Chemical mapping of a 177-nucleotide RNA with DMS and 2A3. The reactions ran in a buffer of 150 mM KOAc, 10 mM MgCl2 and 150 mM bicine (pH 8.5), at 24 C. DMS (dimethyl sulfate) methylates the pairing face of unpaired adenines and cytosines. The DMS profile rests on 2,227 reads. It was measured as part of the RMDB library RFMREP.
RNA sequence: GGGAACGACUCGAGUAGAGUCGAAAAUUCCUGGUCUCCGCGCGAUUACACGCCGGCGACUCAAGGCACCUACACGAACGGACGGUUCGUGUCUCUCCCUAAGAUCGGGAGUAGCAGGGCAUAGGUUAUCACUUACAUUCUUCGGAAUGUAAGUGAUAAAAGAAACAACAACAACAAC
Reactivity to DMS in 0.01 (KOAc 150mM, MgCl2 10mM, bicine 150mM(pH8.5), 24C), signal-to-noise 3, nucleotides 027 to 126: u000u000c000c000u010g010g020u000c000u000c000c000g000c260g010c010g020a110u000u020a220c230a160c010g020c010c020g010g010c050g000a020c000u010c160a110a040g000g010c210a130c010c020u000a060c010a010c010g000a000a000c010g030g010a180c200g010g020u000u000c010g020u000g010u000c070u000c010u010c000c010c010u000a150a180g000a150u010c210g000g000g010a010g000u000a040g010c260a070g010g000g010c080a150u000a100g010g010u000u010
Reactivity to 2A3 in 0.01 (KOAc 150mM, MgCl2 10mM, bicine 150mM(pH8.5), 24C), signal-to-noise 4, nucleotides 027 to 126: u030u010c000c000u010g030g000u000c000u000c000c010g080c000g000c000g100a080u130u250a060c100a010c060g000c000c000g010g010c020g000a010c010u000c140a040a030g100g010c050a130c180c000u010a000c000a000c010g000a000a000c020g050g300a040c140g200g000u010u000c000g000u000g020u000c000u000c000u000c010c020c000u100a260a110g060a290u250c070g010g010g040a000g000u020a020g000c070a010g000g030g010c080a100u110a100g120g000u030u000